Structure probing data (DMS and 2A3) for a 177-nucleotide construct. The DMS profile rests on 3,033 reads. The reactions ran in a buffer of 150 mM KOAc, 10 mM MgCl2 and 150 mM bicine (pH 8.5), at 24 C. It was measured as part of the RMDB library OK2TRN.

[RMDB]
RNA sequence: GGGAACGACUCGAGUAGAGUCGAAAAACAUAUCGAGCCUGAUAAGCAACAUGUGGCUUUGCUACAGUAGUCUCUACGGUAAUUUAACACUAGUGCCACAUUAGGUGGUGGCUUCUGACACUAUGCCGAUGUGACAUUCUUUCGAGAAUGUCACAUCAAAAGAAACAACAACAACAAC
Reactivity to DMS in 0.01 (KOAc 150mM, MgCl2 10mM, bicine 150mM(pH8.5), 24C), signal-to-noise 4, nucleotides 027 to 126: a060c090a110u000a050u010c060g000a150g000c030c010u000g010a120u020a100a110g020c050a040a090c220a040u000g030u000g010g000c050u010u000u000g020c040u000a060c060a050g000u010a040g010u000c060u000c040u010a090c060g010g030u000a020a080u010u010u010a050a120c110a050c080u010a050g020u010g020c000c010a020c030a100u010u010a080g010g030u000g000g020u000g010g000c030u010u000c070u000g010a050c110a080c090u000a070u000g020c070c060
Reactivity to 2A3 in 0.01 (KOAc 150mM, MgCl2 10mM, bicine 150mM(pH8.5), 24C), signal-to-noise 4, nucleotides 027 to 126: a010c030a030u140a030u150c070g010a010g060c020c000u080g070a110u050a200a020g020c010a000a040c020a100u090g010u050g080g000c040u090u070u110g020c020u050a030c030a050g060u110a010g030u040c020u000c020u210a040c040g040g020u050a080a110u070u100u220a090a020c060a020c100u050a040g040u010g090c010c000a030c010a060u070u160a130g300g020u080g040g010u000g030g000c000u050u010c020u030g030a020c000a010c090u060a070u140g070c040c030